[RMDB]
RNA sequence: GGGAACGACUCGAGUAGAGUCGAAAACCAGCAGUCGCGGUAAUACAGAGGCCACGAACAUUAUUCGGAAUCACUGGGCUUAAAGGGUGCGUAGGCGGGCCGCCAAGUGUUCUGUGAAAGCCCCGGGCUGAUGCCUUACAUUCGUGUAAGGCAUCAGAAAAGAAACAACAACAACAAC
Reactivity to DMS in 0.01 (KOAc 150mM, MgCl2 10mM, bicine 150mM(pH8.5), 24C), signal-to-noise 4, nucleotides 027 to 126: c020c000a130g000c100a070g010u000c040g000c050g020g020u020a060a070u010a150c150a090g000a160g020g030c020c020a080c050g000a040a060c170a120u010u030a090u040u000c020g010g010a090a080u030c080a080c030u000g010g010g000c030u000u000a080a070a060g020g000g010u010g010c000g020u000a140g000g000c030g010g000g000c090c030g000c030c030a040a090g020u000g000u000u000c020u000g030u010g000a070a100a080g010c010c000c000c070g000g020g010
Reactivity to 2A3 in 0.01 (KOAc 150mM, MgCl2 10mM, bicine 150mM(pH8.5), 24C), signal-to-noise 4, nucleotides 027 to 126: c000c010a030g040c050a020g030u030c000g010c020g040g020u050a100a040u130a130c050a030g100a050g090g010c010c000a010c020g030a080a010c020a090u190u240a100u120u120c060g040g050a040a010u070c000a020c120u070g000g030g010c000u020u070a080a050a030g040g020g010u080g010c020g070u090a040g040g010c040g020g070g020c040c080g010c010c010a060a040g020u020g050u090u020c020u020g090u040g100a100a030a040g000c000c000c010c000g030g000g020
The record gives the reactivity of an RNA of 177 nucleotides to DMS and 2A3.